[RMDB]
RNA sequence: GGGAACGACUCGAGUAGAGUCGAAAAACGGGCACGUUCGCGUGCCCGUAAUGAACCCUGCAACGCGCAGAGAUCUCGCGAGAGCGCGAAUGCACAAAGAAACAUUUCCAGUUUUCGAACUGGAAAACUACUGUAGAGACUUCGGUCUCUACAGUAGAAAAGAAACAACAACAACAAC
Reactivity to DMS in 0.01 (KOAc 150mM, MgCl2 10mM, bicine 150mM(pH8.5), 24C), signal-to-noise 2, nucleotides 027 to 126: a010c010g010g000g010c000a010c000g010u000u010c120g020c010g050u000g000c000c010c000g000u020a000a040u000g000a170a160c010c000c000u000g010c020a040a220c010g010c020g020c010a090g000a140g010a100u000c080u030c110g010c080g020a160g000a170g010c010g000c000g020a040a120u000g000c020a040c170a040a110a110g000a100a100a080c260a110u010u000u010c010c010a000g040u000u000u000u000c230g010a010a000c000u010g000g000a000a000a020a080
Reactivity to 2A3 in 0.01 (KOAc 150mM, MgCl2 10mM, bicine 150mM(pH8.5), 24C), signal-to-noise 1, nucleotides 027 to 126: a020c000g000g030g020c040a010c000g040u060u080c240g020c020g080u010g000c020c000c040g000u000a020a000u010g020a030a120c000c000c000u020g010c010a060a030c000g010c020g000c070a010g060a020g030a300u010c080u060c090g090c100g070a080g020a020g070c020g000c000g070a050a020u080g000c030a030c090a070a120a030g160a040a160a020c030a020u030u010u000c020c000a000g000u000u010u080u060c100g070a020a000c000u000g000g000a010a010a000a010